RNA sequence: GGGAACGACUCGAGUAGAGUCGAAAAUGACCAAAGAACGAAUCGUCGAAUCGGAUGUCUGAGUUAAUUAGUCAGAGAAAUUCGAAUCGACAUUCGACCUGUGGUCACAAACGAGAGUUCGCUCUCGGAUACUGAUACACUUCGGUGUAUCAGUAUCAAAAGAAACAACAACAACAAC
Reactivity to DMS in 0.01 (KOAc 150mM, MgCl2 10mM, bicine 150mM(pH8.5), 24C), signal-to-noise 4, nucleotides 027 to 126: u000g020a010c000c010a030a060a010g020a070a210c010g010a010a010u000c210g010u000c000g010a030a050u000c010g010g020a010u000g010u000c000u000g000a020g010u010u010a100a130u020u010a260g000u000c000a000g010a040g020a050a090a040u000u000c000g000a030a030u010c010g010a010c000a040u000u000c000g010a060c160c020u000g000u000g010g000u010c000a020c160a050a070a170c010g010a080g000a010g010u000u010c180g010c010u000c000u010c000g000
Reactivity to 2A3 in 0.01 (KOAc 150mM, MgCl2 10mM, bicine 150mM(pH8.5), 24C), signal-to-noise 6, nucleotides 027 to 126: u080g000a000c000c010a070a020a010g020a070a040c010g000a000a010u040c140g010u000c000g000a010a030u010c000g010g010a010u010g050u040c000u010g060a050g120u080u080a140a200u230u200a080g120u020c010a010g000a000g050a080a200a010u020u000c000g000a010a030u010c000g000a000c000a000u000u000c010g000a010c000c010u050g010u030g060g000u020c010a010c040a070a100a010c020g000a010g000a000g020u070u100c160g030c080u000c000u000c000g010

An RNA of 177 nucleotides, treated with DMS and 2A3 and read out base by base. The RNA was probed in 150 mM KOAc, 10 mM MgCl2 and 150 mM bicine (pH 8.5) at 24 C. 2A3 adducts were read by reverse transcription with SuperScript II with manganese.